This 177-nucleotide RNA was probed chemically with DMS and 2A3. For 2A3 the reverse transcriptase was SuperScript II with manganese. For DMS the reverse transcriptase was MarathonRT. The 2A3 profile rests on 1,106 reads.
RNA sequence: GGGAACGACUCGAGUAGAGUCGAAAAAUCAACACCAACCGGAACCUCCACCACGUGCUCGAAUGAGGUGUGUUGACGUCGGGGGAAACCCUCCUGUGUACCAGCGGGAUAGAGAGAAAGACAAAGACUUGUAUGCAGCGUUCGCGCUGCAUACAAGAAAAGAAACAACAACAACAAC
Reactivity to DMS in 0.01 (KOAc 150mM, MgCl2 10mM, bicine 150mM(pH8.5), 24C), signal-to-noise 1, nucleotides 027 to 126: a100u020c120a020a060c020a050c040c040a090a210c050c000g000g000a050a070c060c020u010c000c070a100c040c110a070c180g020u000g020c050u070c070g040a080a100u050g000a090g000g000u000g000u020g000u020u000g000a090c030g040u040c040g000g000g000g040g020a030a130a110c000c000c010u000c000c000u000g000u000g010u020a100c160c070a080g000c060g010g000g000a000u020a030g000a120g000a000g000a110a000a000g020a060c070a120a040a040g000a010
Reactivity to 2A3 in 0.01 (KOAc 150mM, MgCl2 10mM, bicine 150mM(pH8.5), 24C), signal-to-noise 2, nucleotides 027 to 126: a000u020c020a030a030c020a000c010c010a030a080c010c000g020g100a050a060c020c010u010c010c000a010c000c010a030c120g060u090g000c030u020c030g160a210a090u230g010a040g000g020u030g030u010g010u050u050g070a060c070g000u050c020g030g020g000g000g000a000a010a090c000c000c000u020c000c000u030g030u000g020u080a020c000c020a020g000c030g000g000g000a000u160a030g090a020g030a000g020a150a050a000g050a010c070a080a020a010g080a060